[RMDB]
RNA sequence: GGGAACGACUCGAGUAGAGUCGAAAAACAGCAGAUUAAAGUAGCAGAGAUUUCCUUUUCUUACAUAACAAGAAAUCUGGAGGUAGCUGUGACUGGCAGUUGGUUCAGGAGCUUAAGAUCUCAGUGCUGGUUACGUCUUUUUCGAAAGACGUAACCAAAAAGAAACAACAACAACAAC
Reactivity to DMS in 0.01 (KOAc 150mM, MgCl2 10mM, bicine 150mM(pH8.5), 24C), signal-to-noise 1, nucleotides 027 to 126: a080c070a040g020c040a080g010a160u020u000a040a110a100g020u000a140g020c020a030g000a040g020a010u000u010u000c000c000u000u010u030u000c010u010u050a110c120a110u010a160a110c120a020a070g000a010a010a030u010c130u000g010g030a060g000g000u000a020g010c010u010g020u000g000a080c030u000g000g020c020a110g010u010u010g000g010u020u000c050a070g010g000a070g020c040u000u010a050a130g000a090u010c060u010c090a160g010u000g020c150